This 177-nucleotide RNA was probed chemically with 2A3. 2A3 adducts were read by reverse transcription with SuperScript II with manganese. The data come from the RNA Mapping Database (RMDB), library OK1LIB. The RNA was probed in 150 mM KOAc, 10 mM MgCl2 and 150 mM bicine (pH 8.5) at 24 C.
RNA sequence: GGGAACGACUCGAGUAGAGUCGAAAAUUACCACGGCGUCGCCCACGGUAAUGGUGCCAUCCUCAAGGGCGUCCAGCGCAGCGCGCUCGCCGUCGAAAACUCUUGCGGUGCCUUCGAAUACGUCGGAGACGGCCAGCACGUUCGCGUGCUGGCCGUCAAAAGAAACAACAACAACAAC
Reactivity to 2A3 in 0.01 (KOAc 150mM, MgCl2 10mM, bicine 150mM(pH8.5), 24C), signal-to-noise 1, nucleotides 027 to 126: u120u020a030c000c000a090c050g060g000c020g050u000c060g060c000c020c070a070c180g080g040u160a170a080u050g020g000u030g060c000c020a000u080c040c030u000c050a060a020g050g000g000c000g040u010c020c000a000g010c020g000c040a130g000c000g000c000g000c050u000c000g020c000c010g000u000c000g020a050a050a050a050c170u160c010u170u200g020c040g000g010u050g000c040c000u030u110c020g170a120a070u170a020c070g050u010c020g000g010a020